[RMDB]
RNA sequence: GGGAACGACUCGAGUAGAGUCGAAAACCUGAGAUCGUGAGAUCUCAGGAGAUGCAGCGUUCGCGCUGCAUCAAAUUCGUCGGUUCAGCGACGAUAAGCCGAGAAGUGCCAAUAAAACUGUUAAGUGGUUUGGUAACGCUCGGUAAGGUAGCCAAAAGGCUGAAACUCCGUGCACAAAGACCGCACGGACGCUUCACAUAUAGCUCAUAAACAAGGGUUUGCGAGCUAGCUUGUGGAGUGUGAACCUGGCGUUUUUCCAUAGGCUUACAGACCGCUUCGGCGGUCUGAAAAGAAACAACAACAACAAC
Reactivity to DMS in 0.01 (KOAc 150mM, MgCl2 10mM, bicine 150mM(pH8.5), 24C), signal-to-noise 2, nucleotides 027 to 266: c000c000u000g000a020g010a000u000c020g000u040g010a220g000a000u010c000u010c000a000g010g000a060g000a020u000g000c000a030g020c000g040u010u030c180g020c010g030c010u020g010c010a000u020c000a040a110a120u010u020c010g010u000c000g000g000u000u000c020a010g000c000g000a000c010g000a060u020a090a220g010c010c010g000a050g000a030a080g020u000g000c010c000a020a020u000a140a070a150a010c020u000g010u020u010a150a030g010u010g000g000u000u010u010g000g000u000a030a010c040g010c000u010c020g010g020u010a020a010g000g000u010a020g000c000c030a130a140a150a150g000g020c010u000g000a010a010a010c020u000c000c000g050u000g000c010a010c040a040a080a050g000a120c050c010g000c000a010c000g000g000a000c030g000c000u000u010c000a010c010a010u010a090u000a010g000c000u000c010a030u000a000a000a000c010a300a200g020g030g020u000u000u000g020c110g010a010g010c000u010a000g000c160u000u000g020u000g000g010a000g010u000g000u000g010a030a030c070c300u010g010g010c050g010u010u010u030u000u000c010c050a120u020a140g010g000c080u010u010a220
Reactivity to 2A3 in 0.01 (KOAc 150mM, MgCl2 10mM, bicine 150mM(pH8.5), 24C), signal-to-noise 1, nucleotides 027 to 266: c000c000u000g000a010g000a000u010c020g050u020g080a170g000a000u000c000u010c000a000g000g000a060g000a000u000g000c010a000g000c010g040u060u110c120g000c000g040c120u010g000c000a000u000c010a000a000a000u100u030c020g000u010c000g020g000u040u020c000a000g000c010g020a000c000g000a030u070a120a140g000c020c020g000a010g040a300a030g010u000g020c000c010a070a020u120a120a100a010a030c050u110g140u300u240a180a030g040u090g010g080u060u020u020g000g000u030a040a000c010g040c070u000c000g000g000u000a000a000g020g000u000a000g000c000c020a040a300a160a170g010g000c000u000g000a000a000a000c000u020c000c000g010u000g000c010a000c000a050a220a020g170a060c000c020g010c000a000c000g000g000a000c000g000c000u010u000c000a000c000a000u050a010u010a010g000c000u010c020a040u040a040a010a020c060a140a190g300g250g070u030u040u030g010c000g030a020g000c020u020a110g090c050u020u000g000u000g020g000a000g000u020g010u010g000a000a000c000c050u050g060g030c050g040u030u040u010u170u090c020c040a070u100a140g060g110c030u160u120a000
An RNA of 307 nucleotides, treated with DMS and 2A3 and read out base by base. It was measured as part of the RMDB library POS240. 2A3 adducts were read by reverse transcription with SuperScript II with manganese. The RNA was probed in 150 mM KOAc, 10 mM MgCl2 and 150 mM bicine (pH 8.5) at 24 C. For DMS, 5,173 sequencing reads were counted. For DMS the reverse transcriptase was MarathonRT.